[RMDB]
RNA sequence: GGGAACGACUCGAGUAGAGUCGAAAAGCUAACAGCGGUCGGGGCCAGCCAACCCAAGACCGUCCGUGCAGCAGCUACGACGCAAGGAGAACCCAGUGCCGAUUAUCGAGCAGGUUGGGGCCCGAGAAUCUGAGCUAAAUUUCGAUUUAGCUCAGAUAAAAGAAACAACAACAACAAC
Reactivity to DMS in 0.01 (KOAc 150mM, MgCl2 10mM, bicine 150mM(pH8.5), 24C), signal-to-noise 6, nucleotides 027 to 126: g010c030u010a090a090c110a180g000c020g020g020u000c010g020g000g010g000c020c040a120g020c090c080a090a150c020c010c040a080a110g010a020c030c000g010u000c040c060g000u000g000c300a080g020c070a060g000c040u000a060c060g010a080c080g010c090a090a080g020g000a130g010a070a100c020c010c010a070g010u010g010c010c010g000a260u000u010a120u000c040g010a090g000c010a050g000g000u010u010g010g020g010g000c030c010c010g000a120g010a080
Reactivity to 2A3 in 0.01 (KOAc 150mM, MgCl2 10mM, bicine 150mM(pH8.5), 24C), signal-to-noise 3, nucleotides 027 to 126: g010c010u050a130a040c010a040g030c010g000g020u020c010g010g010g030g010c000c020a040g060c060c030a050a060c020c000c020a020a040g000a010c000c010g000u010c010c030g040u050g010c030a060g000c010a010g030c040u080a050c030g100a010c020g020c060a040a060g070g020a120g020a080a050c020c020c000a030g040u040g040c020c000g050a090u110u110a170u300c040g010a060g050c020a010g030g080u050u020g010g000g000g040c000c000c000g030a050g020a020